Structure probing data (DMS) for a 177-nucleotide construct.
Conditions: 150 mM KOAc, 10 mM MgCl2 and 150 mM bicine (pH 8.5), 24 C.
Values cover nucleotides 27 to 126.
RNA sequence: GGGAACGACUCGAGUAGAGUCGAAAAGGUCGCAUCUUCGGAUGCGACCAAAGAACCUCAAAGUGACGCAAUCUUCCGCGUCAGAAGGAGGAAACGAGGUAAAAAGUGCACCCUUCGGGGUGCACAAGACAGAACAAAAGUUCGCUUUUGUUCUGUCAAAAGAAACAACAACAACAAC
Reactivity to DMS in 0.01 (KOAc 150mM, MgCl2 10mM, bicine 150mM(pH8.5), 24C), signal-to-noise 3, nucleotides 027 to 126: g020g000u000c000g020c000a010u000c000u000u020c180g050g000a010u000g000c020g040a000c000c000a010a010a070g010a130a140c020c000u000c010a080a090a140g000u010g010a040c000g010c010a100a070u000c190u000u020c130c150g000c000g000u000c010a020g000a100a130g020g020a050g010g000a070a070a080c150g010a070g020g010u010a030a070a080a080a090g010u000g000c010a010c000c000c000u000u030c210g030g000g020g000u000g010c000a000c000a010a020